[RMDB]
RNA sequence: GGGAACGACUCGAGUAGAGUCGAAAAGUCGCCGCAUCUACAUCAACGCCCAGCGCGGGCGAGGGAGGCUUCCUACGGGGGUGACCCAUUCGCCGGCAUGGUAGAGGACGGCAAGAUUGCCUCGACGAUAGCCUGGUCAUUUCGAUGACCAGGCUAUAAAAGAAACAACAACAACAAC
Reactivity to DMS in 0.01 (KOAc 150mM, MgCl2 10mM, bicine 150mM(pH8.5), 24C), signal-to-noise 1, nucleotides 027 to 126: g030u010c080g030c010c030g000c030a250u010c020u000a030c050a210u000c070a140a090c110g000c030c040c030a100g050c130g040c050g030g000g020c030g040a100g000g010g030a060g000g000c000u000u000c010c000u010a020c240g040g000g020g000g000u000g000a300c000c030c000a170u000u010c000g010c010c030g010g000c020a180u010g010g000u000a040g010a060g010g020a170c030g010g010c070a080a030g010a080u000u000g010c040c010u010c050g000a180c180g000